[RMDB]
RNA sequence: GGGAACGACUCGAGUAGAGUCGAAAAGAGGACGGUGUGAGAUUGGGAGCUCUGUGGCGCUCUGUCCUCUGUCCUAUGUCGAUCGGGCGUCCGCGCUAAGCUCGGCGUCAAUAUGGGCAUUCCAGGGGAGCCCGGAGUGGCCAGGUUGUCCAAGGAGCAAUAAUAUUUCGUUCGCGAAAUAUUAUUGAAAAGAAACAACAACAACAAC
Reactivity to 2A3 in 0.01 (KOAc 150mM, MgCl2 10mM, bicine 150mM(pH8.5), 24C), signal-to-noise 4, nucleotides 027 to 156: g020a010g000g010a000c020g010g000u030g010u060g050a110g030a200u140u170g050g040g040a040g010c010u010c020u080g140u060g070g020c000g010c010u000c010u020g010u000c000c000u020c000u000g010u030c010c020u070a090u120g090u040c110g050a210u030c050g030g030g000c020g080u110c060c040g040c010g000c070u160a130a040g010c020u020c010g010g000c010g010u000c010a050a030u130a080u120g020g010g010c010a020u080u000c020c040a060g060g010g030g060a130g090c030c050c000g000g010a030g010u040g070g000c000c010a020g050g000u030u020g010u020c030c030a050a050g080g000a030g030
Reactivity to DMS in 0.01 (KOAc 150mM, MgCl2 10mM, bicine 150mM(pH8.5), 24C), signal-to-noise 2, nucleotides 027 to 156: g000a050g000g000a040c020g030g030u000g000u010g030a080g010a220u000u000g020g000g030a190g010c000u000c060u010g040u010g020g010c020g000c020u000c010u000g010u000c000c000u000c000u000g000u000c030c050u020a060u010g020u000c020g000a120u010c170g020g000g000c000g020u000c050c070g050c060g010c090u010a080a260g000c020u000c020g020g020c020g030u000c030a040a130u000a090u000g000g020g010c030a050u000u000c030c010a080g000g040g040g010a260g000c030c050c030g020g020a050g040u000g000g000c000c040a060g000g020u010u000g010u000c010c030a100a180g010g000a140g000